[RMDB]
RNA sequence: GGGAACGACUCGAGUAGAGUCGAAAAGAUAUGGAAAUGUCUCCCCACCUAAGACUGCCGUUGAAAUCACCGUAAAUCGGAAACGAUUUACGGUGAUGGAGGCAGCUUAGAGGACAUUUCCUAAGUCGCUUACUAGAAAGUUCGCUUUCUAGUAAGCAAAAGAAACAACAACAACAAC
Reactivity to 2A3 in 0.01 (KOAc 150mM, MgCl2 10mM, bicine 150mM(pH8.5), 24C), signal-to-noise 2, nucleotides 027 to 126: g100a080u290a190u300g000g000a010a000a000u010g020u000c010u200c110c060c000c010a030c010c000u080a100a160g300a300c020u010g000c020c020g200u180u010g010a040a070a010u020c000a020c010c010g000u010a000a000a000u010c000g050g000a120a050a020c020g000a000u000u000u020a000c010g000g000u000g000a000u010g010g010a010g000g000c000a000g000c000u000u000a010g010a010g000g000a000c000a000u000u000u010c020c000u010a080a040g300u160c150
Reactivity to DMS in 0.01 (KOAc 150mM, MgCl2 10mM, bicine 150mM(pH8.5), 24C), signal-to-noise 4, nucleotides 027 to 126: g020a150u010a150u000g010g000a000a010a010u000g000u000c000u010c190c010c000c070a300c110c010u000a000a010g000a220c000u000g010c000c000g000u010u020g010a270a110a020u000c000a010c000c010g020u000a000a000a020u000c010g000g010a070a030a180c000g000a020u000u000u000a000c010g000g010u000g000a000u000g010g000a050g020g010c000a010g000c000u000u000a000g000a130g040g000a010c010a010u000u000u000c000c000u010a060a150g000u010c180

An RNA of 177 nucleotides, treated with 2A3 and DMS and read out base by base.
The data come from the RNA Mapping Database (RMDB), library TTRINS.
Conditions: 150 mM KOAc, 10 mM MgCl2 and 150 mM bicine (pH 8.5), 24 C.
DMS adducts were read by reverse transcription with MarathonRT.
2A3 adducts were read by reverse transcription with SuperScript II with manganese.